This 177-nucleotide RNA was probed chemically with DMS and 2A3. For DMS, 9,351 sequencing reads were counted. Values cover nucleotides 27 to 126. Conditions: 150 mM KOAc, 10 mM MgCl2 and 150 mM bicine (pH 8.5), 24 C.
RNA sequence: GGGAACGACUCGAGUAGAGUCGAAAAUCGAUGUUAUCAUGAGGGUUCCAGGAAGGUCAAGUAAGAAAAAUUAUCUAAGAUGCAUCAGAGGCUGUGUUUUCAUAGACCUAUAAGGGAAGCCUCUGGAACAUUAAAGCGAAUUCGUUCGCUUUAAUGUAAAAGAAACAACAACAACAAC
Reactivity to DMS in 0.01 (KOAc 150mM, MgCl2 10mM, bicine 150mM(pH8.5), 24C), signal-to-noise 7, nucleotides 027 to 126: u010c060g010a080u010g020u000u010a090u010c050a070u010g010a060g000g010g010u000u000c020c010a100g010g020a160a070g000g000u000c040a090a130g010u010a060a090g000a030a040a060a090a120u000u010a060u000c080u000a070a090g010a050u000g000c060a050u010c050a070g010a070g010g020c070u010g000u000g010u000u000u000u000c080a090u000a120g000a060c010c010u000a060u010a140a180g000g010g010a080a040g000c010c010u000c000u000g000g000a080
Reactivity to 2A3 in 0.01 (KOAc 150mM, MgCl2 10mM, bicine 150mM(pH8.5), 24C), signal-to-noise 5, nucleotides 027 to 126: u060c010g020a050u080g020u180u110a110u120c070a070u140g010a020g030g030g010u030u010c020c030a010g080g040a050a010g030g000u020c040a040a060g030u090a090a060g160a070a100a030a040a060u180u130a050u040c010u040a040a080g030a100u080g040c020a030u030c030a030g060a040g180g000c040u020g010u020g020u120u080u030u030c080a090u070a050g010a020c000c010u060a080u080a160a040g080g000g000a020a010g080c000c020u000c000u010g010g010a000